Source: RMDB libraries RFM100 and RFMREP, as collected in RNAgym. The record gives the reactivity of an RNA of 177 nucleotides to DMS and 2A3.
RNA sequence: GGGAACGACUCGAGUAGAGUCGAAAAUCUUACGGUGUUUAUAGCGCGCCAUUUGACGGAUGGUUUAUACUUGGCCCGGUAUUGUCGCCCCGGGCGUUGGCGUCACCGUGUGCUGUGUCGGUAUAGCGUAGAUUAGCGGAUUCGUCCGCUAAUCUACAAAAGAAACAACAACAACAAC
Reactivity to DMS in 0.01 (KOAc 150mM, MgCl2 10mM, bicine 150mM(pH8.5), 24C), signal-to-noise 2, nucleotides 027 to 126: u000c010u010u020a020c060g000g020u010g050u060u010u030a100u020a120g040c050g010c080g010c050c010a090u020u000u040g000a110c110g010g010a020u000g000g020u000u020u050a050u040a060c090u000u020g000g000c000c000c010g010g010u000a090u030u020g000u000c130g000c080c110c010c000g010g000g020c050g050u000u000g000g020c040g000u010c020a030c020c000g010u000g010u020g030c010u000g010u000g020u010c040g020g040u020a040u020a080g000c240
Reactivity to 2A3 in 0.01 (KOAc 150mM, MgCl2 10mM, bicine 150mM(pH8.5), 24C), signal-to-noise 3, nucleotides 027 to 126: u050c040u030u060a040c040g000g000u020g060u080u220u040a150u110a070g110c070g000c000g010c020c010a030u040u060u120g090a040c040g060g000a040u030g010g100u000u160u150a100u060a130c010u060u130g140g000c000c000c000g000g000u070a130u090u150g120u130c020g080c050c010c000c020g000g020g020c000g010u000u050g050g000c000g020u010c010a010c000c000g010u010g020u000g040c030u030g010u060g080u090c020g070g020u100a070u090a120g110c070
The 2A3 profile rests on 1,179 reads. High 2A3 reactivity points to a flexible backbone, as in loops and unpaired stretches. 2A3 adducts were read by reverse transcription with SuperScript II with manganese.